Conditions: 150 mM KOAc, 10 mM MgCl2 and 150 mM bicine (pH 8.5), 24 C. Chemical mapping of a 177-nucleotide RNA with DMS and 2A3. High 2A3 reactivity points to a flexible backbone, as in loops and unpaired stretches. For DMS, 1,285 sequencing reads were counted.

RNA sequence: GGGAACGACUCGAGUAGAGUCGAAAAGAUUGAAGGUCGAUUCUUUGCUCUAAUGUCAUGGAAUCUAAGAUUGUAUUUUGUCAUCACUGAAAAACUCUUGGCCAACUACAUCUUGCCACUUUUUGACAUGACAUCUGGAGUUCGCUCCAGAUGUCAUAAAAGAAACAACAACAACAAC
Reactivity to DMS in 0.01 (KOAc 150mM, MgCl2 10mM, bicine 150mM(pH8.5), 24C), signal-to-noise 1, nucleotides 027 to 126: g000a110u040u000g010a000a070g000g000u000c100g000a110u070u000c000u000u000u020g010c060u090c270u030a160a150u010g020u120c050a000u000g000g000a100a020u000c100u030a190a020g000a070u000u020g020u030a040u000u000u000u060g000u000c000a000u030c080a170c040u000g000a020a030a010a090a070c110u000c010u000u000g000g000c000c000a080a080c070u000a080c140a080u040c000u000u020g000c100c000a030c070u000u000u000u030u000g000a130c250
Reactivity to 2A3 in 0.01 (KOAc 150mM, MgCl2 10mM, bicine 150mM(pH8.5), 24C), signal-to-noise 4, nucleotides 027 to 126: g080a050u160u230g100a110a020g100g020u130c060g040a040u030u000c010u010u010u050g010c000u050c090u210a190a110u120g030u090c010a020u030g060g030a060a020u000c030u080a070a020g010a060u060u190g020u080a080u020u070u030u040g060u030c030a050u040c020a080c170u170g070a050a000a040a060a170c050u060c030u050u070g000g000c000c000a000a020c000u010a030c010a070u000c010u010u000g070c020c010a090c030u040u090u000u010u070g080a070c050
It was measured as part of the RMDB library OK1LIB. Values cover nucleotides 27 to 126. For 2A3, 1,659 sequencing reads were counted. For 2A3 the reverse transcriptase was SuperScript II with manganese.